[RMDB]
RNA sequence: GGGAACGACUCGAGUAGAGUCGAAAAUUUACAACGGAUGUGGCAAUACGAAGGUGAUGUAGUGCGCUUUAUUGCCAGUGACAAUAUGGCGUCGCUUAUCAACAAAACCAGUGACGGCAGCGGAACCACAGCUGUAGCAGUUCGCUGCUACAGCUGUAAAAGAAACAACAACAACAAC
Reactivity to DMS in 0.01 (KOAc 150mM, MgCl2 10mM, bicine 150mM(pH8.5), 24C), signal-to-noise 2, nucleotides 027 to 126: u000u000u000a100c070a110a110c130g020g010a110u000g040u000g000g000c040a040a040u010a100c150g030a140a130g010g010u010g030a050u000g000u000a020g010u000g010c000g000c000u000u000u000a010u030u000g000c000c010a160g050u020g000a070c000a010a030u010a030u000g000g000c000g060u000c050g020c010u000u000a060u020c010a080a090c170a050a100a040a090c110c060a090g030u000g020a090c080g000g020c070a060g010c100g000g000a050a140c110c070
Reactivity to 2A3 in 0.01 (KOAc 150mM, MgCl2 10mM, bicine 150mM(pH8.5), 24C), signal-to-noise 1, nucleotides 027 to 126: u040u090u050a010c000a060a030c100g090g000a050u090g030u070g140g000c020a010a030u010a200c080g120a150a040g000g050u050g050a050u060g090u160a020g030u020g060c050g020c000u180u010u120a070u070u010g000c000c060a020g060u060g130a050c000a010a010u020a010u090g050g000c020g000u030c000g020c000u010u000a050u130c020a000a100c030a030a080a000a060c050c040a020g020u010g100a010c020g010g030c020a050g040c080g000g000a040a000c040c020